About this RNA
Structure probing data (DMS and 2A3) for a 177-nucleotide construct.
RNA sequence: GGGAACGACUCGAGUAGAGUCGAAAACUCCUGCGAAGCCCCCUCGGGGCGCUGUGCAGCGAGGCCCCUUAGGCGGCGGCCACGCUGUGGUCCCCGAGGUCCCGGAGCUGGCCCUGCGGGGCCCGGCACGGCUUAAAAAAUUCGUUUUUUAAGCCGUAAAAGAAACAACAACAACAAC
Reactivity to DMS in 0.01 (KOAc 150mM, MgCl2 10mM, bicine 150mM(pH8.5), 24C), signal-to-noise 1, nucleotides 027 to 126: c100u000c010c050u010g010c050g000a080a130g020c050c040c130c000c000u000c020g020g020g000g020c100g000c080u030g000u030g020c020a010g010c040g000a060g000g000c000c010c020c030u000u030a140g000g020c230g010g030c300g000g000c000c000a050c010g030c000u000g020u000g010g000u030c000c000c000c020g000a030g000g000u000c050c000c010g000g000a120g030c050u010g020g000c040c020c030u000g030c080g020g000g000g000c040c000c020g000g000c070
Reactivity to 2A3 in 0.01 (KOAc 150mM, MgCl2 10mM, bicine 150mM(pH8.5), 24C), signal-to-noise 3, nucleotides 027 to 126: c020u010c010c010u020g040c060g060a090a050g020c030c010c010c000c000u010c000g010g000g030g000c010g010c020u080g060u130g050c000a000g000c000g010a030g010g000c020c000c000c000u110u210a200g130g090c080g040g020c100g000g000c040c000a020c010g010c010u010g020u050g020g020u060c010c000c000c000g000a000g000g010u020c010c000c000g050g010a050g000c010u010g000g000c000c010c000u030g020c160g020g000g000g020c090c160c000g010g000c020
The reactions ran in a buffer of 150 mM KOAc, 10 mM MgCl2 and 150 mM bicine (pH 8.5), at 24 C. Reactivities are given for positions 27 through 126. High DMS reactivity at an A or C suggests that its Watson-Crick edge is free. Source: RMDB library RFM100, as collected in RNAgym.